[RMDB]
The record gives the reactivity of an RNA of 177 nucleotides to 2A3. 2A3 is a SHAPE reagent: it acylates the 2'-hydroxyl of flexible nucleotides of all four kinds. 2A3 adducts were read by reverse transcription with SuperScript II with manganese. Values cover nucleotides 27 to 126. Conditions: 150 mM KOAc, 10 mM MgCl2 and 150 mM bicine (pH 8.5), 24 C. The data come from the RNA Mapping Database (RMDB), library TTRDES.
RNA sequence: GGGAACGACUCGAGUAGAGUCGAAAAAAAAAAGAUAUGGAAAGAACUACCAAGGAGUAAGCGAAGAACAUUAUUCGGAAACGAAUAAUGGGAGCUUACCGAGCUUGGCUUUCCUAAGUCAAAAAAACCAGUUAAGAUAGUUCGCUAUCUUAACUGGAAAAGAAACAACAACAACAAC
Reactivity to 2A3 in 0.01 (KOAc 150mM, MgCl2 10mM, bicine 150mM(pH8.5), 24C), signal-to-noise 1, nucleotides 027 to 126: a000a040a060a000a020a090g080a070u220a000u070g000g040a030a000a010g010a090a080c160u200a090c290c000a000a000g090g040a300g110u030a040a000g030c050g160a300a040g030a130a030c000a020u010u010a010u010u000c000g040g000a090a020a000c020g000a000a000u020a010a010u040g010g000g080a020g060c010u000u000a010c010c000g010a020g230c040u030u020g000g000c000u010u000u000c000c000u070a130a020g060u080c070a000a000a000a080a000a070a140